Structure probing data (DMS and 2A3) for a 207-nucleotide construct. Source: RMDB library M2RFPK, as collected in RNAgym. For DMS the reverse transcriptase was MarathonRT. Conditions: 150 mM KOAc, 10 mM MgCl2 and 150 mM bicine (pH 8.5), 24 C.
RNA sequence: GGGAACGACUCGAGUAGAGUCGAAAAUUCUCAGCACUCAUCAAGAAGUAGGCUUAGGCCAAUUGCUUGGUGGUGAAAGUAGUGGGAAGGUAGCACUUCGACGCCUCUAAGUACGCUGUGGGAGUAGAAAACUGGACAUCGUUCGCGAUGUCCAGAACUUCGAACUUAACUUCGGUUAAGUUCGAAGAAAAGAAACAACAACAACAAC
Reactivity to DMS in 0.01 (KOAc 150mM, MgCl2 10mM, bicine 150mM(pH8.5), 24C), signal-to-noise 1, nucleotides 027 to 156: u010u000c000u000c010a180g030c000a080c020u020c030a000u020c010a020a030g000a010a030g060u000a150g020g010c020u000u010a120g000g030c020c010a050a030u010u010g010c010u000u010g030g040u010g010g000u000g030a090a070a200g030u000a040g030u000g010g030g010a080a100g010g020u000a090g020c060a090c080u000u000c040g000a070c000g000c030c020u000c060u010a120a170g010u000a030c140g000c000u040g000u020g020g040g030a070g010u000a160g000a050a040a050a110c000u000g020g010a010c000a000u000c000g030u000u010c300g080c050g000a010u000g010u000c000c000a000g030a040a040
Reactivity to 2A3 in 0.01 (KOAc 150mM, MgCl2 10mM, bicine 150mM(pH8.5), 24C), signal-to-noise 1, nucleotides 027 to 156: u030u030c000u000c000a040g020c030a010c040u300c000a040u020c030a040a000g030a120a000g060u050a100g030g010c060u100u150a100g030g000c030c000a070a140u040u080g020c020u000u000g000g000u000g010g020u020g050a000a000a050g080u080a000g050u050g090g050g000a060a040g030g000u040a050g040c040a010c040u100u000c060g080a040c080g020c020c010u090c000u040a060a030g010u010a030c030g020c140u120g010u050g040g000g000a090g000u110a060g130a060a060a020a010c000u000g000g000a000c000a000u030c000g030u090u040c060g020c010g100a000u000g030u020c000c000a000g030a000a000